This 207-nucleotide RNA was probed chemically with 2A3 and DMS. For DMS the reverse transcriptase was MarathonRT. DMS (dimethyl sulfate) methylates the pairing face of unpaired adenines and cytosines. The data come from the RNA Mapping Database (RMDB), library OK3TST.
[RMDB]
RNA sequence: GGGAACGACUCGAGUAGAGUCGAAAAUGCCUGCAUCAUCGCAUGUCAUCAUGACAACCUAUGGGGGAGAACAGCUCCAUUCAACAGAUGCAGAAACUGCAGGUUAAAGGGUGAAAAGCAGUUGCGAAGUCCCCACAGCUUGGAAAUGGUGGAGCCGUACUCAGAGACAUUUCGAUGUCUCUGAGUAAAAAGAAACAACAACAACAAC
Reactivity to 2A3 in 0.01 (KOAc 150mM, MgCl2 10mM, bicine 150mM(pH8.5), 24C), signal-to-noise 3, nucleotides 027 to 156: u100g030c000c020u020g060c020a030u050c010a010u090c050g060c150a050u050g050u090c020a140u020c050a070u200g030a050c030a060a070c030c000u050a100u130g000g010g000g010g010a110g030a150a040c010a030g050c000u020c000c000a030u110u110c020a070a090c020a070g070a050u030g000c000a020g090a040a070a020c030u030g000c000a000g000g020u030u040a120a060a020g040g030g010u040g040a080a080a050a010g060c040a020g010u070u070g020c040g020a060a000g080u020c030c000c010c000a020c020a010g010c020u080u070g060g020a060a160a170u110g030g020u010g020g030a010g000c000c000g010
Reactivity to DMS in 0.01 (KOAc 150mM, MgCl2 10mM, bicine 150mM(pH8.5), 24C), signal-to-noise 2, nucleotides 027 to 156: u010g060c040c010u010g000c030a090u020c050a130u030c050g000c010a180u020g020u020c010a140u000c100a130u040g010a160c060a060a110c050c040u020a100u010g020g020g060g070g000a200g050a070a090c100a140g000c020u000c010c020a200u000u000c070a050a160c120a160g010a060u000g000c030a090g000a050a030a050c060u010g020c020a100g000g000u000u000a030a090a110g000g010g010u010g010a070a080a080a120g020c040a080g040u000u000g000c040g020a070a130g020u000c000c000c000c010a040c040a040g000c080u000u000g020g000a060a110a070u000g010g030u000g000g000a080g000c020c000g000